This 207-nucleotide RNA was probed chemically with 2A3. It was measured as part of the RMDB library RNAMAK.

RNA sequence: GGGAACGACUCGAGUAGAGUCGAAAAGGGGUCAAGCUUGGACCAACUAUAAGGCGAAGAACAUGGCUGAAGCCUCCACGGCCAUGGGAGCCUUACGUUGCUAGCUUGACGGAGGCACCCAAACGUUGUAUAAACUGUUCGCAGUUUAUACAACGAAGAUGCUGGGUAUGUUCGCAUACCCAGCAUCAAAAGAAACAACAACAACAAC
Reactivity to 2A3 in 0.01 (KOAc 150mM, MgCl2 10mM, bicine 150mM(pH8.5), 24C), signal-to-noise 2, nucleotides 027 to 156: g070g010g020g030u030c010a000a000g020c030u300u300g100g020a040c020c020a000a000c040u080a060u080a300a000g010g020c010g160a250a000g000a020a000c000a010u010g000g000c010u020g010a110a040g020c000c010u000c000c010a020c000g010g000c000c000a000u000g010g000g000a000g000c000c010u020u010a040c040g000u000u000g000c030u050a020g000c000u000u000g000a010c010g000g010a000g020g000c010a070c010c010c000a010a070a010c030g000u000u010g000u000a010u000a000a000a000c000u000g060u080u070c300g020c150a000g000u000u000u000a000u000a000c000a000a000c000g000a030a020